Structure probing data (DMS) for a 177-nucleotide construct. The reactions ran in a buffer of 150 mM KOAc, 10 mM MgCl2 and 150 mM bicine (pH 8.5), at 24 C. For DMS, 1,477 sequencing reads were counted.

RNA sequence: GGGAACGACUCGAGUAGAGUCGAAAAGAAAGAAAGAAAGACGCGGCAAGAAGUUCUGCGCUAUAACGAAAAAGGGGGGGUCUGUCACUGGCUUUGCCCUCGUGAUAGAGGGCUUUUUAUAACGGAACUAUCCUUGCUCGUUCGCGAGCAAGGAUAGAAAAGAAACAACAACAACAAC
Reactivity to DMS in 0.01 (KOAc 150mM, MgCl2 10mM, bicine 150mM(pH8.5), 24C), signal-to-noise 2, nucleotides 027 to 126: g000a170a040a060g010a150a120a070g000a070a110a020g040a050c050g050c050g020g050c050a140a120g070a020a040g000u010u030c010u010g030c000g000c070u090a000u010a060a070c180g000a030a000a030a130a120g000g020g000g030g020g010g000u010c000u020g000u000c070a080c050u070g000g020c000u000u010u000g020c020c010c000u000c000g040u040g060a180u060a060g030a000g020g010g000c000u000u000u060u030u040a130u010a110a060c020g010g000a150a140